Conditions: 150 mM KOAc, 10 mM MgCl2 and 150 mM bicine (pH 8.5), 24 C.
Chemical mapping of a 177-nucleotide RNA with 2A3 and DMS.
Reactivities are given for positions 27 through 126.
[RMDB]
RNA sequence: GGGAACGACUCGAGUAGAGUCGAAAAGAUAUGGAUGCGGAUGGUUGAGCGUCCGGUCGGAAACGACCGUACGCAAUGAUGCCAUCAACGCAUCCUAAGUCAAAACACCAUAUCUUCGGAUAUGGUGCUUUCCUGCAGUCUUCGGACUGCAGGAAAGAAAAGAAACAACAACAACAAC
Reactivity to 2A3 in 0.01 (KOAc 150mM, MgCl2 10mM, bicine 150mM(pH8.5), 24C), signal-to-noise 1, nucleotides 027 to 126: g000a010u030a000u060g010g010a000u010g000c030g010g020a030u000g000g030u040u090g030a020g000c020g000u000c100c000g030g030u000c000g000g010a000a020a000c010g010a010c000c000g000u010a000c000g000c040a010a020u240g170a040u280g010c000c000a000u000c010a030a010c030g020c000a000u040c000c000u000a000a010g000u000c000a000a010a040a210c010a000c000c010a000u000a000u000c020u040u060c300g170g000a010u010a000u020g010g020u000g010
Reactivity to DMS in 0.01 (KOAc 150mM, MgCl2 10mM, bicine 150mM(pH8.5), 24C), signal-to-noise 2, nucleotides 027 to 126: g020a020u000a060u000g000g000a010u020g010c010g000g000a020u000g000g000u000u000g010a300g000c020g000u000c070c020g020g000u010c000g000g010a020a000a020c000g010a010c000c000g020u000a010c010g070c000a030a000u010g020a020u000g000c000c000a010u000c000a110a060c020g000c000a000u010c000c000u000a010a080g010u010c000a120a100a160a300c020a010c000c000a000u000a000u010c000u000u010c270g000g000a010u000a000u000g000g030u000g000
For 2A3, 3,953 sequencing reads were counted. 2A3 is a SHAPE reagent: it acylates the 2'-hydroxyl of flexible nucleotides of all four kinds. In probing experiments dimethyl sulfate is read out at A N1 and C N3, which are open when not base-paired. 2A3 adducts were read by reverse transcription with SuperScript II with manganese.